RNA sequence: GGGAACGACUCGAGUAGAGUCGAAAAUUGACGAAGUGGCGCUGCUGUCCCGACCAGUCGGACAGAAUCCGCUGGCCGACAGCGGAAUCGGUAGCGUCGACGUGCACUUGUAUGGUGCCGUGCAGCCCACGUUUUAGGAGUUCGCUCCUAAAACGUGAAAAGAAACAACAACAACAAC
Reactivity to 2A3 in 0.01 (KOAc 150mM, MgCl2 10mM, bicine 150mM(pH8.5), 24C), signal-to-noise 4, nucleotides 027 to 126: u060u070g040a030c040g040a180a010g080u060g090g000c010g010c020u010g000c010u020g020u060c020c030c010g100a290c050c040a080g020u050c020g010g010a010c020a040g060a040a160u090c070c100g030c090u000g000g000c020c030g020a010c010a000g000c000g000g020a010a030u140c030g010g000u000a010g020c000g000u000c020g010a000c000g010u060g000c010a010c010u250u120g220u190a150u300g040g000u020g000c010c010g020u060g020c030a040g050c000c020
Reactivity to DMS in 0.01 (KOAc 150mM, MgCl2 10mM, bicine 150mM(pH8.5), 24C), signal-to-noise 4, nucleotides 027 to 126: u000u010g000a080c060g010a120a160g020u000g010g000c090g020c000u000g010c010u000g000u000c030c040c020g010a090c090c070a160g030u000c010g010g020a030c020a040g010a100a300u010c280c200g030c000u000g000g000c010c020g010a030c010a140g000c020g000g000a020a030u000c040g020g010u000a020g010c010g020u010c010g020a020c030g020u020g000c000a010c010u000u000g020u000a100u000g010g020u000g010c000c010g010u000g010c060a100g010c020c030

Record summary:
An RNA of 177 nucleotides, treated with 2A3 and DMS and read out base by base. Reactivities are given for positions 27 through 126. For 2A3 the reverse transcriptase was SuperScript II with manganese. Conditions: 150 mM KOAc, 10 mM MgCl2 and 150 mM bicine (pH 8.5), 24 C.